[RMDB]
RNA sequence: GGGAACGACUCGAGUAGAGUCGAAAAACGAAAGGAAGGAAGGAAGGAAAGAAAGGAAAGGAAGGAAAGAAAGGAAAGGAAGUAAGUAAGGAUGGAUGGAUCCAGGUGCUCUAAACCAGCAGUUCCCUAAAGCGCUAGUAUUCGUACUAGCGCUUUAAAAAGAAACAACAACAACAAC
Reactivity to DMS in 0.01 (KOAc 150mM, MgCl2 10mM, bicine 150mM(pH8.5), 24C), signal-to-noise 2, nucleotides 027 to 126: a060c080g000a100a140a090g000g000a050a030g000g030a090a100g020g030a080a070g030g010a070a110a060g010a060a060a070g020g010a050a100a030g050g010a040a040g010g000a010a050a060g000a040a050a050g000g010a040a040a090g000g000a040a050g030u000a030a050g010u020a060a050g020g010a070u000g020g000a070u000g010g010a030u000c060c020a070g000g000u010g000c070u000c060u010a040a020a070c100c170a030g000c150a090g000u000u010c000c010c020